[RMDB]
RNA sequence: GGGAACGACUCGAGUAGAGUCGAAAAAUUUUCAUUCAUUCAACCAAGUUCAACAAAUGUUCAAGAACGUAUUUUACAGUAACUAUAAAAAUAUUUGUGUGAGGUCGGGCGCAGUGGCUCAUGCCUGACUAGUACCUGUGUUCGCACAGGUACUAGUAAAAGAAACAACAACAACAAC
Reactivity to DMS in 0.01 (KOAc 150mM, MgCl2 10mM, bicine 150mM(pH8.5), 24C), signal-to-noise 2, nucleotides 027 to 126: a130u000u000u000u000c020a060u000u010c070a100u000u000c070a120a100c030c040a050a070g000u000u010c040a090a050c020a020a060a040u000g010u010u000c070a140a110g040a100a080c080g010u000a030u020u000u000u010a060c050a120g020u010a040a090c040u000a180u010a030a090a020a010a040u000a040u000u000u000g010u000g040u000g010a100g010g000u000c080g010g040g000c060g020c070a020g040u000g000g030c040u000c110a100u010g020c000c020u010g000
Reactivity to 2A3 in 0.01 (KOAc 150mM, MgCl2 10mM, bicine 150mM(pH8.5), 24C), signal-to-noise 1, nucleotides 027 to 126: a020u090u020u000u040c070a050u080u000c030a040u060u080c040a030a030c000c020a010a000g050u010u030c020a020a020c000a060a090a040u100g000u040u050c080a030a010g010a070a030c030g030u080a070u020u100u100u040a050c050a000g020u020a120a000c030u040a060u140a300a140a050a030a020u060a070u050u030u030g000u000g030u010g030a040g030g040u020c020g000g020g010c050g060c050a000g030u020g100g000c020u030c020a010u200g000c030c020u000g050